[RMDB]
RNA sequence: GGGAACGACUCGAGUAGAGUCGAAAAGAUGCCAUGGGGGUGGCAUGGAGACUGAUGGCAGGCUGAGGGUUGAGACAGCCUGAGACGAGCAGAGCACUGCUCCAUAGUAAGGUGCGCCUCACUGAGGCAUCGUUUGCGCAUUCGUGCGCAAACGAUGAAAAGAAACAACAACAACAAC
Reactivity to 2A3 in 0.01 (KOAc 150mM, MgCl2 10mM, bicine 150mM(pH8.5), 24C), signal-to-noise 1, nucleotides 027 to 126: g040a000u060g000c000c000a000u010g000g000g000g010g030u050g080g040c020a010u030g050g010a060g070a020c050u090g040a070u090g080g010c000a010g020g000c020u020g030a060g130g200g030u150u190g030a040g030a030c010a000g000c000c000u010g010a020g000a040c040g010a020g000c020a000g010a050g000c100a040c240u010g000c000u000c050c000a030u070a050g030u020a000a060g160g000u000g000c050g020c020c010u050c000a230c050u110g040a170g020g070
Reactivity to DMS in 0.01 (KOAc 150mM, MgCl2 10mM, bicine 150mM(pH8.5), 24C), signal-to-noise 3, nucleotides 027 to 126: g020a060u000g000c010c010a140u010g030g000g000g000g000u000g010g010c010a000u000g010g020a200g010a070c020u020g030a060u000g020g000c010a030g000g010c010u030g010a140g010g000g010u010u020g020a140g000a160c010a060g010c010c000u000g010a050g000a130c170g000a040g010c000a010g010a270g030c300a120c030u010g020c010u000c000c040a040u000a040g010u010a060a240g020g020u000g000c010g000c000c000u010c000a080c120u010g010a150g020g010